[RMDB]
RNA sequence: GGGAACGACUCGAGUAGAGUCGAAAAGAUAUGGAUAUCGAGCGAAGCUAAGGAGGUCGGAAACGACUCCCCACCCUUAGAACUACUUCCCGAUAUCCUAAGUCAAACUGGCUGUUCGCAGCCAGAAGUAGAACUCCUAGUUCGCUAGGAGUUCUACAAAAGAAACAACAACAACAAC
Reactivity to DMS in 0.01 (KOAc 150mM, MgCl2 10mM, bicine 150mM(pH8.5), 24C), signal-to-noise 2, nucleotides 027 to 126: g000a060u000a300u000g000g000a010u000a010u000c010g010a080g020c210g010a030a000g010c020u000a030a040g020g010a100g000g010u010c040g020g000a080a060a150c030g010a040c010u000c050c010c010c010a300c070c010c040u000u000a000g010a030a050c080u000a300c040u000u000c010c000c010g010a030u000a020u000c000c010u000a000a010g000u000c010a090a080a220c000u000g000g030c000u000g000u010u000c220g030c000a010g020c000c000a000g000a010a100
Reactivity to 2A3 in 0.01 (KOAc 150mM, MgCl2 10mM, bicine 150mM(pH8.5), 24C), signal-to-noise 2, nucleotides 027 to 126: g030a020u080a040u160g000g010a000u020a010u030c020g030a040g050c210g070a000a000g000c000u030a000a000g000g000a030g000g100u030c020g010g030a070a050a040c020g010a020c010u040c020c000c010c000a000c030c000c000u040u040a000g020a080a040c110u270a010c000u190u030c000c000c020g010a000u000a000u010c000c000u010a070a020g070u010c030a080a070a130c020u010g010g010c000u000g060u120u130c300g000c120a000g010c010c000a000g000a020a010